[RMDB]
RNA sequence: GGGAACGACUCGAGUAGAGUCGAAAACACACGGUCUACAAGAGGCCUGAUACCCAGUCAAUUCAGAAGGUUCAGGCCGAGUUUGACAGCUUUGUGGUACCGAGCCUGUGGUCGUCCGGGUUGUCAACGAGGAGUACGUAUUCGUACGUACUCCUCGAAAAGAAACAACAACAACAAC
Reactivity to 2A3 in 0.01 (KOAc 150mM, MgCl2 10mM, bicine 150mM(pH8.5), 24C), signal-to-noise 4, nucleotides 027 to 126: c070a000c010a010c020g040g050u040c050u060a020c010a020a070g100a040g120g000c000c000u000g010a020u150a120c000c000c030a050g150u070c040a070a200u300u150c080a060g090a140a060g050g010u010u010c010a000g000g000c000c000g000a000g010u060u080u080g050a030c020a040g010c030u070u060u090g050u060g000g040u090a040c000c010g030a020g080c000c000u090g020u080g060g030u040c030g030u020c020c010g020g000g090u020u020g080u010c000a050a030
Reactivity to DMS in 0.01 (KOAc 150mM, MgCl2 10mM, bicine 150mM(pH8.5), 24C), signal-to-noise 3, nucleotides 027 to 126: c120a180c130a130c100g030g000u000c000u040a070c050a060a030g020a100g000g000c010c000u000g010a020u080a040c030c000c050a110g020u010c190a100a130u050u050c140a100g020a110a150g000g000u010u000c020a000g030g000c000c010g000a050g000u060u000u020g020a100c130a150g000c070u010u000u040g010u000g000g000u050a100c030c010g000a110g000c070c120u010g000u000g000g020u030c070g010u030c040c020g000g000g010u000u020g010u020c100a040a110